[RMDB]
RNA sequence: GGGAACGACUCGAGUAGAGUCGAAAACAGAAGUGAAUGGCCUGAAGGCCUCUCGCUUCUUCAGUCUCGCUGAGCGGCUGAAUGUGGGUGCCGCACCUUUCAUCUGGCUCUUCAUCCGCCCUCCGUGCACCAGUAUGACAUUCGUGUCAUACUGGUGAAAAGAAACAACAACAACAAC
Reactivity to 2A3 in 0.01 (KOAc 150mM, MgCl2 10mM, bicine 150mM(pH8.5), 24C), signal-to-noise 5, nucleotides 027 to 126: c040a010g010a010a000g010u000g010a030a030u070g010g010c020c060u260g220a300a120g030g010c000c000u020c000u000c010g020c000u010u010c000u030u020c020a020g060u000c010u010c050g000c050u070g050a030g000c050g050g020c040u060g030a120a070u120g020u100g070g030g060u080g040c030c020g060c020a080c000c010u120u210u140c060a140u040c070u060g040g000c020u000c000u080u040c020a050u020c020c000g020c030c010c000u000c010c030g040u060g030
Reactivity to DMS in 0.01 (KOAc 150mM, MgCl2 10mM, bicine 150mM(pH8.5), 24C), signal-to-noise 5, nucleotides 027 to 126: c170a050g000a010a010g020u000g010a020a090u000g010g010c000c000u010g040a160a190g020g010c000c000u000c090u000c000g010c010u000u000c000u000u000c150a070g000u010c020u000c020g020c120u010g010a080g000c080g010g010c050u000g010a030a050u000g010u000g000g010g010u000g020c070c070g030c080a080c070c060u000u000u000c100a040u010c070u000g010g020c010u000c040u000u000c020a080u000c030c060g000c030c000c010u000c030c050g010u000g010